[RMDB]
Structure probing data (2A3) for a 207-nucleotide construct. It was measured as part of the RMDB library OK3TST.
RNA sequence: GGGAACGACUCGAGUAGAGUCGAAAAACUUGGGCUAACUGGACAACCUCUGUAGUUGGUACCAACGUAAAUAUAGCCUGGGAGCAGAGAUCUUUCCAGCAACUGAGAUGUCACCCCGCUCUUACUGUUACCCAGAGGGAGGACUGCAGGAUCCAGCCUAGUCGAUAUCGUUCGCGAUAUCGACUAGAAAAGAAACAACAACAACAAC
Reactivity to 2A3 in 0.01 (KOAc 150mM, MgCl2 10mM, bicine 150mM(pH8.5), 24C), signal-to-noise 1, nucleotides 027 to 156: a000c000u020u020g000g000g020c000u000a020a000c000u050g060g010a020c000a050a120c080c050u070c040u030g090u160a040g010u000u000g080g030u180a300c040c000a080a040c080g060u090a000a100a030u260a030u090a110g160c010c020u000g000g000g040a010g040c070a020g040a010g000a140u090c020u040u110u110c060c020a010g000c040a070a130c030u040g000a010g030a160u040g050u130c020a140c000c030c010c000g050c000u000c010u070u170a090c040u060g050u000u070a120c000c030c030a010g010a050g040g040g000a030g000g060a040c060u090g000c080a000g020g020a070u050c030c020a000g000c010
The reactions ran in a buffer of 150 mM KOAc, 10 mM MgCl2 and 150 mM bicine (pH 8.5), at 24 C.